[RMDB]
This 177-nucleotide RNA was probed chemically with 2A3. The reactions ran in a buffer of 150 mM KOAc, 10 mM MgCl2 and 150 mM bicine (pH 8.5), at 24 C. For 2A3 the reverse transcriptase was SuperScript II with manganese. Values cover nucleotides 27 to 126.
RNA sequence: GGGAACGACUCGAGUAGAGUCGAAAAGAAUUGGUAUGUAAGCUACGGCUUCCGGUAGCUGCGUCACACUUUAAGAGUGUGCAUACUGAGCCGAAGCUCAGCUUCGGUCCCCCAAGGGAAGACCAAACGGCGGAGCAUCAUUCGUGAUGCUCCGCCGAAAAGAAACAACAACAACAAC
Reactivity to 2A3 in 0.01 (KOAc 150mM, MgCl2 10mM, bicine 150mM(pH8.5), 24C), signal-to-noise 1, nucleotides 027 to 126: g090a010a100u020u000g000g000u000a000u000g000u000a030a030g000c000u000a000c000g090g000c000u000u000c000c000g000g000u000a010g000c020u000g000c000g080u000c000a000c000a000c000u030u000u300a290a090g210a000g300u000g000u000g000c000a000u000a000c000u000g000a000g000c000c000g010a000a000g010c010u040c300a040g060c000u030u000c000g000g000u000c000c000c000c000c000a000a020g090g020g010a040a000g000a030c010c130a040a040a000